[RMDB]
RNA sequence: GGGAACGACUCGAGUAGAGUCGAAAAUUUGCUAUAUUUCUACUUAUAGAUGGCUAAAAUCUGAGUUUGAGAGCAGCAUGCCACAGAUGCUUGGAUUUUACUAUUGGAUUUUGCUGCCGGAAUAGGGAACCUUUUACAUCUUCGGAUGUAAAAGGUUAAAAGAAACAACAACAACAAC
Reactivity to 2A3 in 0.01 (KOAc 150mM, MgCl2 10mM, bicine 150mM(pH8.5), 24C), signal-to-noise 4, nucleotides 027 to 126: u070u040u100g000c010u020a020u010a050u180u130u020c040u020a090c020u110u040a040u030a110g070a050u030g030g000c050u050a020a010a020a020u010c010u010g020a030g090u040u150u120g120a130g000a030g040c030a020g000c020a020u120g070c030c030a090c060a040g110a090u070g040c020u030u040g010g070a130u030u050u020u140a070c030u030a060u070u110g020g000a010u010u060u020u140g150c250u080g020c000c010g020g050a040a010u020a060g060g010g000
Reactivity to DMS in 0.01 (KOAc 150mM, MgCl2 10mM, bicine 150mM(pH8.5), 24C), signal-to-noise 3, nucleotides 027 to 126: u030u020u020g010c060u020a060u010a130u000u010u000c010u000a080c050u000u010a050u010a080g000a190u020g000g000c080u010a030a010a020a000u000c010u010g000a030g010u010u010u000g010a070g010a300g010c080a040g000c040a040u000g030c050c090a060c210a100g000a050u000g000c020u000u000g000g000a210u000u000u000u010a020c030u000a090u010u000g000g010a040u010u000u000u000g010c050u010g020c000c010g000g020a070a030u010a040g010g010g010